[RMDB]
RNA sequence: GGGAACGACUCGAGUAGAGUCGAAAAUAAGAAGAAAGCAGACAGGGUGGCUGCAGGGAAGCAUAAGUUAGCCACAGCUGCAAGAAAAGUGGCACAACAAUAUGAGAACACAACUGCCAUGCUAUUAACCGUUUAAACGGUUCGCCGUUUAAACGGUAAAAGAAACAACAACAACAAC
Reactivity to 2A3 in 0.01 (KOAc 150mM, MgCl2 10mM, bicine 150mM(pH8.5), 24C), signal-to-noise 1, nucleotides 027 to 126: u150a020a020g050a070a000g020a120a150a000g000c010a000g030a060c030a050g220g190g060u020g000g050c030u020g030c010a050g120g060g090a080a000g010c000a040u080a210a070g060u110u130a020g010c000c000a010c000a000g050c030u080g040c000a020a000g140a020a070a000a020g000u000g010g000c030a030c020a090a050c040a120a000u090a080u250g120a150g040a130a000c070a020c020a140a000c000u000g040c010c010a030u040g010c000u030a030u120u110a130
Reactivity to DMS in 0.01 (KOAc 150mM, MgCl2 10mM, bicine 150mM(pH8.5), 24C), signal-to-noise 1, nucleotides 027 to 126: u020a160a080g000a060a120g040a100a100a030g010c080a030g000a110c110a040g010g000g010u010g030g000c050u040g020c100a130g000g000g000a150a160g000c130a070u010a040a070g000u000u000a070g040c000c000a070c000a130g090c050u000g000c080a070a100g010a080a100a140a120g000u000g010g000c060a090c130a020a090c120a040a100u010a070u000g030a030g000a150a030c070a060c040a080a080c010u000g000c000c030a050u000g010c070u020a070u010u000a060